[RMDB]
RNA sequence: GGGAACGACUCGAGUAGAGUCGAAAAAGGUGUAGACCACCUAUUAUCAUUUUACCUGUUUUGAUUCUCUGAUGAGCAAAGUCCCAAGACUUAUCAGCUGGGAUAGGCCUCAUUUACAAGACAGCUCGGUACCAAUGUAGUUCGCUACAUUGGUACCAAAAGAAACAACAACAACAAC
Reactivity to 2A3 in 0.01 (KOAc 150mM, MgCl2 10mM, bicine 150mM(pH8.5), 24C), signal-to-noise 2, nucleotides 027 to 126: a000g020g010u050g010u050a070g090a200c070c000a000c010c010u030a170u160u080a050u050c070a070u030u190u130u110a050c010c000u000g050u000u010u010u000g060a120u190u000c050u030c020u100g030a020u000g020a020g000c030a070a000a040g020u000c000c010c010a070a050g030a120c060u050u150a160u300c140a050g000c010u000g010g000g020a020u020a050g050g030c010c000u000c000a000u020u010u000a030c010a010a030g010a000c000a020g020c130u170c130
Reactivity to DMS in 0.01 (KOAc 150mM, MgCl2 10mM, bicine 150mM(pH8.5), 24C), signal-to-noise 2, nucleotides 027 to 126: a040g010g030u000g000u010a170g010a160c200c010a000c020c020u000a070u000u010a070u020c090a150u000u000u010u000a060c240c000u000g020u010u000u010u010g000a120u020u000c010u010c120u020g010a030u000g000a010g010c030a100a080a270g010u000c000c000c010a050a050g030a170c040u000u000a090u000c220a040g010c050u000g020g000g000a020u000a030g000g020c190c010u000c010a020u000u000u020a020c060a010a060g010a030c030a020g010c290u000c220
Chemical mapping of a 177-nucleotide RNA with 2A3 and DMS. DMS (dimethyl sulfate) methylates the pairing face of unpaired adenines and cytosines. For 2A3 the reverse transcriptase was SuperScript II with manganese. It was measured as part of the RMDB library RFMREP. DMS adducts were read by reverse transcription with MarathonRT. The reactions ran in a buffer of 150 mM KOAc, 10 mM MgCl2 and 150 mM bicine (pH 8.5), at 24 C.